[RMDB]
Chemical mapping of a 177-nucleotide RNA with 2A3 and DMS.
The RNA was probed in 150 mM KOAc, 10 mM MgCl2 and 150 mM bicine (pH 8.5) at 24 C.
Reactivities are rounded to 0.1 and cut off at 0 and 3.
RNA sequence: GGGAACGACUCGAGUAGAGUCGAAAAGAACCUGUUGAUGCUGAUGCCGGAGAGGAUGAUGAGGUCAUUUUUGUGUCUGCUAAACCUGGUUCCAGAAAGAGGUCAGCGGUGACUUCCCGCGGCUCAGCUAGUGGAACGUUUUCGAACGUUCCACUAGAAAAGAAACAACAACAACAAC
Reactivity to 2A3 in 0.01 (KOAc 150mM, MgCl2 10mM, bicine 150mM(pH8.5), 24C), signal-to-noise 3, nucleotides 027 to 126: g020a030a090c000c010u030g060u150u110g070a110u160g000c000u030g000a050u140g050c030c020g060g070a140g040a060g200g010a080u130g050a060u150g130a100g050g060u000c030a050u040u010u100u110u200g150u030g040u030c030u050g060c040u060a070a070a060c000c010u050g080g030u120u040c040c000a060g110a050a120a000g090a020g020g060u050c020a010g020c020g000g000u020g010a040c000u060u030c030c000c000g040c000g000g010c000u010c010a010g040
Reactivity to DMS in 0.01 (KOAc 150mM, MgCl2 10mM, bicine 150mM(pH8.5), 24C), signal-to-noise 3, nucleotides 027 to 126: g010a110a170c020c020u010g020u010u020g010a090u000g000c010u010g000a060u020g020c010c030g000g020a140g020a120g000g010a120u000g000a120u000g000a060g010g000u020c010a060u000u000u000u010u000g010u010g000u020c030u000g000c130u000a080a110a070c070c030u000g010g000u010u000c100c080a090g000a080a110a110g010a060g010g000u000c070a030g030c060g010g010u000g010a040c040u000u000c020c020c020g000c020g010g000c010u000c020a030g010
Reactivities are given for positions 27 through 126. It was measured as part of the RMDB library OK2TRN.